[RMDB]
RNA sequence: GGGAACGACUCGAGUAGAGUCGAAAACAUUUGACAAUAACAAGGUUCGUGAUGACGUGUACCAGAGCAUCCUCACAAAUAACCUCCCAAAUCUUCUGGAGUACGGCAACAUCACCGCUCUGACAAAAUCCGCUACUACUUUCGAGUAGUAGCGGAUAAAAGAAACAACAACAACAAC
Reactivity to DMS in 0.01 (KOAc 150mM, MgCl2 10mM, bicine 150mM(pH8.5), 24C), signal-to-noise 1, nucleotides 027 to 126: c080a130u000u010u010g010a130c170a110a070u000a040a180c120a040a070g010g030u000u000c130g020u000g010a050u000g000a040c070g060u000g040u000a070c020c010a090g000a040g000c040a100u000c000c060u000c010a050c100a070a000a080u020a100a200c040c020u000c020c020c030a050a090a050u010c130u010u010c000u000g010g000a210g000u000a000c060g000g020c020a090a040c200a050u000c110a050c040c060g010c070u000c010u000g010a030c260a010a080a130
Reactivity to 2A3 in 0.01 (KOAc 150mM, MgCl2 10mM, bicine 150mM(pH8.5), 24C), signal-to-noise 2, nucleotides 027 to 126: c050a070u070u040u140g070a090c070a070a090u110a160a010c120a110a040g070g000u030u040c040g030u080g030a040u060g050a000c060g010u020g060u050a090c000c010a020g000a000g060c000a000u020c000c010u000c020a040c020a020a130a060u180a060a060c030c010u000c000c030c000a030a090a070u080c050u060u040c020u050g010g020a020g050u140a000c010g040g010c080a090a000c000a110u050c010a000c020c020g030c030u030c030u050g020a030c060a000a040a050